[RMDB]
RNA sequence: GGGAACGACUCGAGUAGAGUCGAAAAGUUGAAAAAGAGAACAUCAGACUAGCGAUACAGAAUGCCUGUCACUCGGCAAGCUGUAAAGUGAAUCCUUAAAUGAGUUGACUAUGAACGUAGAUUUUUAAGUGGCGAUGUGUUUGGACGCGGGUUCGACCCAAUACCUUACCUUCGGGUAAGGUAUUGGAAAAGAAACAACAACAACAAC
Reactivity to 2A3 in 0.01 (KOAc 150mM, MgCl2 10mM, bicine 150mM(pH8.5), 24C), signal-to-noise 5, nucleotides 027 to 156: g010u030u060g080a050a040a010a050a020g060a010g020a080a040c040a070u080c020a020g080a090c020u040a010g010c010g060a040u010a030c000a010g030a070a060u020g000c000c010u090g070u140c020a030c080u020c010g000g000c010a020a020g030c000u010g000u030a010a020a030g030u030g040a030a010u040c040c000u070u070a030a090a050u130g020a010g070u100u060g080a030c020u050a040u220g040a080a010c050g030u060a040g030a180u080u070u020u020u110a100a040g010u030g040g000c030g010a040u040g080u010g010u030u060u060g030g000a010c020g000c040g050g030g000u040u040c010g030a030c000
Reactivity to DMS in 0.01 (KOAc 150mM, MgCl2 10mM, bicine 150mM(pH8.5), 24C), signal-to-noise 2, nucleotides 027 to 156: g010u000u010g010a050a090a080a090a090g010a220g010a070a100c060a130u000c080a090g020a050c030u000a300g050c020g000a300u010a130c020a030g010a120a110u000g000c000c020u000g040u000c100a110c140u000c140g000g030c020a040a100g010c020u000g030u000a030a050a230g010u010g010a050a050u010c040c030u020u000a010a050a070u000g010a060g020u000u000g010a120c040u000a060u000g020a080a060c120g000u000a050g000a160u000u000u030u010u010a000a100g020u010g030g000c020g010a090u000g050u010g010u000u020u000g000g010a060c080g030c080g010g000g000u000u000c050g020a170c120
Annotation
Conditions: 150 mM KOAc, 10 mM MgCl2 and 150 mM bicine (pH 8.5), 24 C. An RNA of 207 nucleotides, treated with 2A3 and DMS and read out base by base. DMS adducts were read by reverse transcription with MarathonRT. Values cover nucleotides 27 to 156. For 2A3 the reverse transcriptase was SuperScript II with manganese.